Conditions: 150 mM KOAc, 10 mM MgCl2 and 150 mM bicine (pH 8.5), 24 C. The record gives the reactivity of an RNA of 177 nucleotides to DMS and 2A3. For DMS, 11,757 sequencing reads were counted. For 2A3 the reverse transcriptase was SuperScript II with manganese. Source: RMDB library TTRDES, as collected in RNAgym. Reactivities are given for positions 27 through 126.
RNA sequence: GGGAACGACUCGAGUAGAGUCGAAAAGAUAUGGACGUACAGAGACGAUAAGAAGCCAUCGGAAACGAUGGGCUUCUUUUGACGUCUUUGUACGUCCUAAGUCAAACCCCAAGGUUCGCCUUGGGGACCCAUUAUAGAGGUUCGCCUCUAUAAUGGGAAAAGAAACAACAACAACAAC
Reactivity to DMS in 0.01 (KOAc 150mM, MgCl2 10mM, bicine 150mM(pH8.5), 24C), signal-to-noise 6, nucleotides 027 to 126: g000a040u000a300u000g000g000a010c000g020u000a000c000a010g010a000g000a010c000g030a220u010a010a020g010a030a000g010c000c000a020u000c000g010g010a130a090a160c000g010a010u000g010g020g010c000u000u000c000u000u000u010u000g010a200c110g000u000c000u010u000u000g000u000a000c000g010u000c000c000u000a000a050g010u000c030a130a140a210c010c000c000c000a010a010g000g020u000u020c300g010c000c000u000u000g000g000g010g010a010
Reactivity to 2A3 in 0.01 (KOAc 150mM, MgCl2 10mM, bicine 150mM(pH8.5), 24C), signal-to-noise 5, nucleotides 027 to 126: g010a010u040a030u100g000g010a020c000g010u010a010c000a010g010a010g000a020c090g080a080u080a300a010g000a000a010g000c010c000a000u000c010g020g030a080a050a010c010g000a010u050g050g020g040c010u000u020c010u030u000u010u020g020a010c030g000u000c000u000u000u000g000u000a000c000g000u010c000c000u000a000a000g000u000c000a010a030a100c000c000c000c000a000a000g070g000u090u170c300g120c090c000u000u000g000g010g000g000a010

DMS adducts were read by reverse transcription with MarathonRT.